[RMDB]
RNA sequence: GGGAACGACUCGAGUAGAGUCGAAAACCUGUUGAAGAUAUUGCGCAGGUUGUCAUAGCUGACACCUUACAGGAAACUCCUGUUGUGCCUGAUACUGUUGAAGUCCCACCGCAAGUGGUGAAACUUCCUAUACCGUGAUUCGUCACGGUAAAAAGAAACAACAACAACAAC
Reactivity to DMS in 0.01 (KOAc 150mM, MgCl2 10mM, bicine 150mM(pH8.5), 24C), signal-to-noise 9, nucleotides 027 to 129: c000c020u000g030u010u020g030a160a140g020a100u030a020u020u000g020c270g000c090a020g010g030u010u030g040u010c030a070u010a040g000c250u000g030a030c030a050c000c060u030u030a010c020a000g000g000a110a140a130c220u020c010c010u020g030u020u030g030u000g020c030c030u010g010a050u020a030c080u000g000u000u000g030a040a060g000u020c060c020c020a000c060c070g040c180a120a240g000u040g000g020u030g020a040a080a000c090u010u010c000c060u020a240
Reactivity to 2A3 in 0.01 (KOAc 150mM, MgCl2 10mM, bicine 150mM(pH8.5), 24C), signal-to-noise 5, nucleotides 027 to 129: c000c020u040g030u080u160g050a090a060g040a130u080a100u120u140g060c050g010c020a010g030g040u080u090g020u040c040a000u090a170g090c120u070g080a020c000a000c010c010u070u060a010c020a010g000g060a120a120a080c050u020c010c000u000g010u030u040g040u090g040c000c030u020g050a000u070a140c090u070g130u160u070g000a010a010g030u060c020c000c000a010c000c000g070c100a090a050g030u030g060g010u100g050a080a010a010c010u020u000c010c000u060a080
Structure probing data (DMS and 2A3) for a 170-nucleotide construct. For DMS, 58,914 sequencing reads were counted. For DMS the reverse transcriptase was MarathonRT. Reactivities are rounded to 0.1 and cut off at 0 and 3. 2A3 adducts were read by reverse transcription with SuperScript II with manganese. The RNA was probed in 150 mM KOAc, 10 mM MgCl2 and 150 mM bicine (pH 8.5) at 24 C. For 2A3, 7,396 sequencing reads were counted.